[RMDB]
RNA sequence: GGGAACGACUCGAGUAGAGUCGAAAAACGUACCUAUUCGUAGGUACGUGAUUAAUAGCUAGUCAUAUAAAAGGAAGACUAGCAAUAUAGAAUCCUAUAUUAAUAGCACAUGUUUCGACAUGUGCAAACAGUUAACAGCAUUCGUGCUGUUAACUGUAAAAGAAACAACAACAACAAC
Reactivity to DMS in 0.01 (KOAc 150mM, MgCl2 10mM, bicine 150mM(pH8.5), 24C), signal-to-noise 2, nucleotides 027 to 126: a010c000g010u000a010c000c000u000a010u010u010c120g030u000a010g010g010u010a000c000g000u010g010a050u000u000a060a080u000a160g030c000u000a010g000u000c010a090u000a150u000a110a100a110a090g010g000a110a150g000a010c010u000a000g000c000a040a010u000a040u000a080g010a110a090u010c020c010u000a030u010a120u000u000a120a090u000a140g010c010a010c000a010u000g000u010u000u020c190g000a010c000a000u000g020u000g010c000a050a030
Reactivity to 2A3 in 0.01 (KOAc 150mM, MgCl2 10mM, bicine 150mM(pH8.5), 24C), signal-to-noise 3, nucleotides 027 to 126: a000c010g000u000a000c000c010u000a000u010u050c210g030u020a000g000g000u000a010c000g000u000g000a000u010u150a040a130u040a060g020c000u000a000g010u000c010a050u110a020u090a300a230a070a000g120g060a170a120g030a010c000u000a000g000c000a000a010u060a000u000a030g090a040a050u070c000c010u040a050u000a010u230u200a160a210u120a130g000c000a000c000a010u010g010u030u150u080c040g070a020c020a000u000g000u000g020c000a000a000
An RNA of 177 nucleotides, treated with DMS and 2A3 and read out base by base. The 2A3 profile rests on 2,535 reads. The RNA was probed in 150 mM KOAc, 10 mM MgCl2 and 150 mM bicine (pH 8.5) at 24 C. It was measured as part of the RMDB library M2PK50.